[RMDB]
RNA sequence: GGGAACGACUCGAGUAGAGUCGAAAAACGGACUGAGUACGCUCAGUCCGAAAAGAUGCUCAAUGAAACCCCCAUGUCCUCGAAGGGAGUGGUUUGACUACCGCUCCCGUAGACGGCACGGGGAGAACUCGCAAAUAAUGUUCGCAUUAUUUGCGAGAAAAGAAACAACAACAACAAC
Reactivity to DMS in 0.01 (KOAc 150mM, MgCl2 10mM, bicine 150mM(pH8.5), 24C), signal-to-noise 4, nucleotides 027 to 126: a130c010g030g030a000c010u000g010a000g040u010a070c270g000c010u000c000a000g030u010c000c000g000a010a040a080a080g000a060u020g010c010u010c030a160a110u040g000a050a070a120c120c010c010c000c000a160u000g000u000c000c070u000c010g000a120a300g000g000g000a000g010u000g020g030u000u000u010g010a120c180u000a040c000c020g030c000u000c000c000c000g010u000a070g010a010c300g000g000c000a020c140g000g000g010g020a010g020a060a080
Reactivity to 2A3 in 0.01 (KOAc 150mM, MgCl2 10mM, bicine 150mM(pH8.5), 24C), signal-to-noise 4, nucleotides 027 to 126: a000c010g000g010a000c000u000g000a010g020u040a040c170g060c090u030c000a000g000u000c010c000g000a000a000a000a000g070a030u210g010c010u040c140a040a130u170g120a090a130a100c000c000c000c010c010a020u030g030u080c020c010u040c020g080a110a020g000g000g020a000g000u010g030g040u010u070u210g150a120c130u060a000c010c000g000c000u000c000c000c000g000u000a000g000a000c010g000g030c000a010c030g000g000g000g000a030g000a000a010
Chemical mapping of a 177-nucleotide RNA with DMS and 2A3. For 2A3, 2,756 sequencing reads were counted. The reactions ran in a buffer of 150 mM KOAc, 10 mM MgCl2 and 150 mM bicine (pH 8.5), at 24 C. Values are in units of 0.01, from 0 to 300, in steps of 10.